[RMDB]
RNA sequence: GGGAACGACUCGAGUAGAGUCGAAAAAGCCGGACAGCAGCACGACCUGCUUCCCGGCCAGCUGGAAGGUACCGACGUCUCCGCAUUCGUCGCGGACCCGUUGCAUCAGCCCGAUCGGAUCGGUGCGAUCACGCACUACGUUCGCGUAGUGCGUGAUAAAAGAAACAACAACAACAAC
Reactivity to DMS in 0.01 (KOAc 150mM, MgCl2 10mM, bicine 150mM(pH8.5), 24C), signal-to-noise 4, nucleotides 027 to 126: a080g000c010c000g050g010a110c150a000g010c020a020g000c110a150c200g010a130c240c020u000g000c010u000u000c070c010c020g020g010c010c050a030g000c030u000g010g020a110a080g010g010u010a060c080c010g000a050c040g000u000c110u000c020c030g030c020a200u000u020c140g020u010c160g040c070g000g000a030c040c010c020g010u000u010g000c070a060u000c020a100g030c020c020c010g010a070u010c120g030g020a300u000c020g000g010u010g020c030g010
Reactivity to 2A3 in 0.01 (KOAc 150mM, MgCl2 10mM, bicine 150mM(pH8.5), 24C), signal-to-noise 2, nucleotides 027 to 126: a000g010c010c000g000g000a020c030a020g030c000a000g010c060a010c300g120a220c030c000u020g000c000u010u010c000c010c010g010g000c010c000a020g030c020u060g060g090a110a020g050g020u040a040c000c040g000a000c010g050u010c030u040c060c000g000c040a080u130u100c120g220u080c070g030c020g010g000a020c000c000c000g100u080u100g000c040a080u050c050a040g050c000c030c010g030a110u100c040g140g020a050u030c010g020g010u130g030c030g030
The record gives the reactivity of an RNA of 177 nucleotides to DMS and 2A3.
The reactions ran in a buffer of 150 mM KOAc, 10 mM MgCl2 and 150 mM bicine (pH 8.5), at 24 C.